[RMDB]
RNA sequence: GGGAACGACUCGAGUAGAGUCGAAAACGGCAUGAUACCACCGUUAUCGGGUCAACAGAGUAGUUGCAAAUGACAACAAUGCUCAGGGUCAUGCUCUCGCUGCCUAAUGGCGGUGCGGGAAACCCACAAAAGAUAUUGAUCUUCGGAUCAAUAUCAACAAGAACCAGGUCUUCGGACCUGGUUCUUGAAAAGAAACAACAACAACAAC
Reactivity to 2A3 in 0.01 (KOAc 150mM, MgCl2 10mM, bicine 150mM(pH8.5), 24C), signal-to-noise 1, nucleotides 027 to 156: c000g000g000c000a000u020g000a000u060a100c010c010a030c020c000g130u130u060a060u260c000g000g000g000u070c050a070a000c050a020g020a130g000u060a000g000u000u000g000c080a130a080a300u260g180a120c000a000a000c010a000a060u020g000c040u000c020a040g020g030g010u000c000a040u180g000c000u000c000u000c000g000c000u010g000c000c000u300a300a180u110g010g000c010g040g170u060g000c040g020g000g030a120a120a120c020c070c000a050c100a010a150a000a000g020a000u000a000u000u010g000a000u000c000u020u300c300g110g000a000u000c000a000a020u000a000u000c000a000a000